[RMDB]
RNA sequence: GGGAACGACUCGAGUAGAGUCGAAAAUGAGAUCGACUGGGUGGCAUGGUUUACUCCAAACAGGUAUCGUAACUUCUUUUGGUCCGAUUUCUAUAAACUGGGUGACCAAUACUGCUGUGUCACGACCGAAUGCUAGCGGUUUCGACCGCUAGCAUUCAAAAGAAACAACAACAACAAC
Reactivity to DMS in 0.01 (KOAc 150mM, MgCl2 10mM, bicine 150mM(pH8.5), 24C), signal-to-noise 1, nucleotides 027 to 126: u000g010a170g000a010u000c040g010a090c040u000g000g010g020u000g000g000c060a040u000g020g000u000u000u050a040c040u000c000c100a020a140a140c270a080g000g000u020a040u010c060g000u000a070a050c020u030u020c130u000u020u000u010g010g000u000c110c010g030a020u000u000u000c030u020a160u050a040a040a060c140u000g010g010g010u000g000a020c030c020a020a120u010a170c110u010g030c000u000g030u020g000u020c000a070c120g000a100c100c040
Reactivity to 2A3 in 0.01 (KOAc 150mM, MgCl2 10mM, bicine 150mM(pH8.5), 24C), signal-to-noise 1, nucleotides 027 to 126: u130g000a070g020a080u070c030g050a040c020u070g080g050g020u030g020g000c010a040u050g000g020u070u070u080a070c030u070c060c000a030a030a060c020a010g090g000u010a040u000c020g040u040a050a050c040u040u080c020u000u040u080u130g020g000u000c010c040g000a000u000u110u000c040u110a290u160a070a110a080c140u050g010g050g040u040g020a020c000c050a010a030u060a080c070u110g100c040u020g000u020g110u190c010a010c070g010a060c030c060